[RMDB]
RNA sequence: GGGAACGACUCGAGUAGAGUCGAAAAUCUGUGAACAUAUGAUCGUGAUAUUGGCCCUUAGCAUCUAAAUGCAAUAAACGCGAAGCACUACGUGUUUCGAGUGGGUAACGGGCAAUAAGUUCAUCGAUCAGGGACGAUUAUUCGUAAUCGUCCCUGAAAAAGAAACAACAACAACAAC
Reactivity to DMS in 0.01 (KOAc 150mM, MgCl2 10mM, bicine 150mM(pH8.5), 24C), signal-to-noise 2, nucleotides 027 to 126: u000c020u000g020u000g010a060a080c050a110u010a030u010g010a070u020c050g030u010g000a100u000a050u020u000g000g000c000c010c010u010u000a200g000c000a040u000c250u040a050a080a080u000g020c000a110a070u000a040a110a050c020g000c000g000a000a000g020c020a000c000u000a140c300g000u010g020u020u000u000c000g000a000g000u000g000g000g020u000a100a070c240g000g010g000c060a030a040u000a020a050g000u000u000c020a020u000c160g000a040
Reactivity to 2A3 in 0.01 (KOAc 150mM, MgCl2 10mM, bicine 150mM(pH8.5), 24C), signal-to-noise 2, nucleotides 027 to 126: u050c020u010g060u030g110a080a010c030a050u150a090u200g070a050u050c040g040u050g080a010u060a060u180u130g230g000c010c000c020u030u120a030g000c000a010u030c060u260a210a300a110u050g010c020a010a060u040a160a170a000c000g000c000g020a010a000g000c010a000c030u300a100c270g000u000g000u010u000u000c010g000a030g060u140g000g020g000u030a050a040c040g000g000g020c050a010a020u040a050a010g050u010u010c010a040u100c030g000a010